[RMDB]
RNA sequence: GGGAACGACUCGAGUAGAGUCGAAAAGAUAUUGGUCUCUUGAACACUAGGAUAGGGAAAUUCAAAGCGAUGGAAGGAGAUUUUAGCAAGGUCCCUAAUGCACACGCGUUCCAAAGCAAAGAUGGGAAUGCCAGAGACAAUUCGUUGUCUCUGGCAUAAAAGAAACAACAACAACAAC
Reactivity to DMS in 0.01 (KOAc 150mM, MgCl2 10mM, bicine 150mM(pH8.5), 24C), signal-to-noise 1, nucleotides 027 to 126: g020a090u010a060u030u000g040g060u000c010u010c030u000u000g020a170a060c130a090c070u010a100g040g000a070u020a070g020g060g010a020a120a120u010u030c040a100a090a160g050c030g000a100u000g000g010a050a050g010g000a100g010a100u000u000u000u000a040g020c080a030a070g020g000u080c000c020c020u010a120a120u000g010c020a070c040a110c210g010c030g000u000u000c030c020a060a030a160g000c090a030a050a100g000a070u020g000g020g010a080